RNA sequence: GGGAACGACUCGAGUAGAGUCGAAAAAAAAAUAACCAACAAUGUGAUCUUGCUUGCGGACGCAAAAUUUGCACAGUAUAAAAUCUGCAAGUAGUGCUAUUGUUGGAAAGAAAACUGUGCUAAAAAACACUCAAUAUAAGUUCGCUUAUAUUGAGUGAAAAGAAACAACAACAACAAC
Reactivity to DMS in 0.01 (KOAc 150mM, MgCl2 10mM, bicine 150mM(pH8.5), 24C), signal-to-noise 3, nucleotides 027 to 126: a030a040a040a100a110u010a090a140c000c010a000a000c020a000a010u000g000u000g000a210u010c080u000u000g010c000u000u000g020c010g030g010a020c190g000c210a040a030a050a090u000u000u000g000c010a040c010a010g000u000a060u010a050a050a070a120u000c000u000g000c010a000a020g010u000a020g010u000g040c010u000a000u000u000g020u000u000g000g000a030a050a080g000a060a080a030a020c000u000g020u000g010c020u010a000a080a060a100a070a110
Reactivity to 2A3 in 0.01 (KOAc 150mM, MgCl2 10mM, bicine 150mM(pH8.5), 24C), signal-to-noise 3, nucleotides 027 to 126: a000a000a000a010a010u100a050a030c010c000a010a000c000a010a000u210g120u040g300a300u130c040u050u070g000c000u000u000g010c000g010g010a010c030g010c120a050a090a060a130u040u070u020g010c000a010c010a000g030u020a010u050a300a080a030a130u030c010u000g030c000a000a000g000u020a020g120u060g060c010u000a000u010u000g000u000u020g000g040a000a170a000g010a020a060a010a000c010u010g010u030g020c000u020a100a130a000a020a020a020

An RNA of 177 nucleotides, treated with DMS and 2A3 and read out base by base. The RNA was probed in 150 mM KOAc, 10 mM MgCl2 and 150 mM bicine (pH 8.5) at 24 C. DMS (dimethyl sulfate) methylates the pairing face of unpaired adenines and cytosines. 2A3 adducts were read by reverse transcription with SuperScript II with manganese. The DMS profile rests on 3,048 reads. For 2A3, 3,132 sequencing reads were counted.